[RMDB]
RNA sequence: GGGAACGACUCGAGUAGAGUCGAAAAAUACAGCGUAAUCGACCGGAGGAAAACGGCACUCCGAAAAUCCGGUACGAUUAUGAUCCCACUGCGUCGACGCUAGAUGCAGAACCGGAUUGCCGAGGAACAAUACAGCCUGUUUCGACAGGCUGUAUUGAAAAGAAACAACAACAACAAC
Reactivity to 2A3 in 0.01 (KOAc 150mM, MgCl2 10mM, bicine 150mM(pH8.5), 24C), signal-to-noise 2, nucleotides 027 to 126: a000u180a010c070a040g100c040g030u020a020a000u000c010g020a000c010c020g040g020a040g010g120a040a140a060a080c010g010g030c100a040c120u060c020c010g010a080a000a000a080u000c000c000g000g040u050a190c020g000a000u060u000a010u000g020a010u010c000c020c000a050c010u010g000c010g000u000c010g010a070c120g050c300u120a040g000a050u020g010c000a000g010a030a050c000c020g070g000a140u080u070g070c020c010g030a050g050g010a130a040
Reactivity to DMS in 0.01 (KOAc 150mM, MgCl2 10mM, bicine 150mM(pH8.5), 24C), signal-to-noise 3, nucleotides 027 to 126: a090u020a080c160a090g030c060g030u000a010a030u000c010g000a090c000c000g000g010a070g020g000a050a070a100a070c040g000g000c110a070c260u000c020c010g000a060a060a110a080u000c000c010g000g010u000a070c050g010a050u010u000a000u000g010a070u000c000c000c000a300c050u000g000c030g020u000c020g010a080c210g010c180u000a120g010a030u010g000c030a020g010a110a110c220c010g000g010a040u000u000g000c000c010g020a140g000g020a090a130
The data come from the RNA Mapping Database (RMDB), library M2PK90. The record gives the reactivity of an RNA of 177 nucleotides to 2A3 and DMS. 2A3 adducts were read by reverse transcription with SuperScript II with manganese. DMS adducts were read by reverse transcription with MarathonRT. The DMS profile rests on 2,253 reads. The RNA was probed in 150 mM KOAc, 10 mM MgCl2 and 150 mM bicine (pH 8.5) at 24 C.